[RMDB]
RNA sequence: GGGAACGACUCGAGUAGAGUCGAAAACUCAGCCCCUCCACCUUGGAGUGCCCUAUUCGGAGCACUGCAGUCCCGAUAGAAAGGCUAAGCACCUCGCAAUGACGUAAGGUGGGACUUUUCCUUCGGGCUACCAAGUAGACUUCGGUCUACUUGGUAGAAAAGAAACAACAACAACAAC
Reactivity to DMS in 0.01 (KOAc 150mM, MgCl2 10mM, bicine 150mM(pH8.5), 24C), signal-to-noise 1, nucleotides 027 to 126: c030u010c060a160g000c020c010c000c020u010c010c020a070c180c110u010u000g030g000a050g000u000g000c000c000c000u000a130u010u000c270g000g000a090g000c000a010c020u010g000c060a140g020u010c000c020c000g010a010u000a060g000a010a000a040g000g010c030u000a100a110g020c020a010c010c000u000c040g000c050a220a190u010g010a130c180g010u010a060a030g000g000u000g010g020g000a050c010u020u000u010u010c000c050u010u000c010g030g000g000
Reactivity to 2A3 in 0.01 (KOAc 150mM, MgCl2 10mM, bicine 150mM(pH8.5), 24C), signal-to-noise 1, nucleotides 027 to 126: c020u020c050a030g190c010c000c010c000u040c040c020a040c020c060u130u010g070g060a000g000u020g040c000c000c000u140a300u180u240c140g000g020a080g000c020a000c000u050g090c010a040g030u030c060c000c000g010a000u010a030g020a010a000a000g050g000c010u030a210a000g100c000a000c000c090u000c000g000c020a140a300u290g080a180c000g020u040a030a000g000g040u010g010g000g070a070c010u070u000u020u000c020c000u000u050c000g000g020g000

The data come from the RNA Mapping Database (RMDB), library VIROID. An RNA of 177 nucleotides, treated with DMS and 2A3 and read out base by base. The DMS profile rests on 1,164 reads. The reactions ran in a buffer of 150 mM KOAc, 10 mM MgCl2 and 150 mM bicine (pH 8.5), at 24 C. Values cover nucleotides 27 to 126. For DMS the reverse transcriptase was MarathonRT.